Source: RMDB library 15KLIB, as collected in RNAgym. Chemical mapping of a 170-nucleotide RNA with 2A3 and DMS. The RNA was probed in 150 mM KOAc, 10 mM MgCl2 and 150 mM bicine (pH 8.5) at 24 C.

[RMDB]
RNA sequence: GGGAACGACUCGAGUAGAGUCGAAAAAUACCGAACAGACACAGAAUGUUACUGUUAAACCUAAGAGGUUACGCAAAAAGCGUAAUGUUGACCCUUUGUCCAAUUUUGAACAUAAGGUUAUUACAGAAAGCGAGCCGCUUCGGCGGCUCGAAAAGAAACAACAACAACAAC
Reactivity to 2A3 in 0.01 (KOAc 150mM, MgCl2 10mM, bicine 150mM(pH8.5), 24C), signal-to-noise 1, nucleotides 027 to 129: a000u020a000c000c000g000a030a000c100a090g050a000c000a000c030a000g240a190a040u170g230u010u130a030c000u090g040u090u000a000a010a000c030c030u080a080a020g070a000g160g080u000u000a000c000g000c050a000a000a150a000a000g000c000g040u010a000a000u070g080u080u130g020a000c000c000c000u040u000u030g070u000c070c110a040a220u080u090u130u090g000a000a000c010a010u010a000a000g020g000u040u080a010u170u120a100c000a000g200a040a100a000g060
Reactivity to DMS in 0.01 (KOAc 150mM, MgCl2 10mM, bicine 150mM(pH8.5), 24C), signal-to-noise 2, nucleotides 027 to 129: a100u070a210c080c000g000a020a050c110a000g020a100c240a000c150a190g080a070a120u040g060u000u010a200c060u030g080u030u000a000a000a150c000c070u150a130a100g000a020g010g010u030u030a040c050g000c050a060a110a070a190a060g080c040g010u000a000a000u000g000u000u060g020a100c000c000c000u000u180u000g000u010c060c050a150a090u000u000u180u210g000a060a000c000a000u060a030a000g000g000u040u030a020u030u030a110c000a030g010a070a090a000g000